The record gives the reactivity of an RNA of 177 nucleotides to DMS and 2A3. DMS adducts were read by reverse transcription with MarathonRT. For DMS, 2,774 sequencing reads were counted. 2A3 adducts were read by reverse transcription with SuperScript II with manganese.
RNA sequence: GGGAACGACUCGAGUAGAGUCGAAAAUGGGCGUGUUGGUCGAAACAAACCCGGGCACAUACUGCGAAUCGGAUCAACACAAAAAGGUAUAGUAGAAACGCCAAUAUGCGUAGCGACAGAAGCAGCAUCUUAUGCUUGCUUUCGAGCAAGCAUAAGAAAAAGAAACAACAACAACAAC
Reactivity to DMS in 0.01 (KOAc 150mM, MgCl2 10mM, bicine 150mM(pH8.5), 24C), signal-to-noise 4, nucleotides 027 to 126: u010g000g000g020c120g030u000g000u000u000g020g010u010c030g010a140a080a070c120a070a100a160c040c010c020g030g010g020c060a040c130a130u000a100c120u010g000c050g000a090a120u010c050g020g020a060u010c030a030a020c050a020c070a020a040a040a070a040g000g010u000a060u010a130g010u000a090g000a050a060a070c130g020c040c070a040a080u010a100u010g000c020g020u000a120g000c040g000a060c150a060g010a070a080g000c020a030g000c060a160
Reactivity to 2A3 in 0.01 (KOAc 150mM, MgCl2 10mM, bicine 150mM(pH8.5), 24C), signal-to-noise 2, nucleotides 027 to 126: u070g040g060g050c080g000u040g000u010u010g000g020u020c010g030a130a050a060c070a040a070a050c040c030c000g030g050g050c020a040c000a120u270a150c070u060g020c040g080a070a120u050c010g040g030a020u000c000a010a040c010a010c010a040a080a020a010a000g150g010u170a150u100a200g150u050a030g140a140a070a000c030g010c000c010a050a050u150a040u140g010c020g080u060a010g000c010g080a070c000a090g030a040a000g000c030a000g000c000a040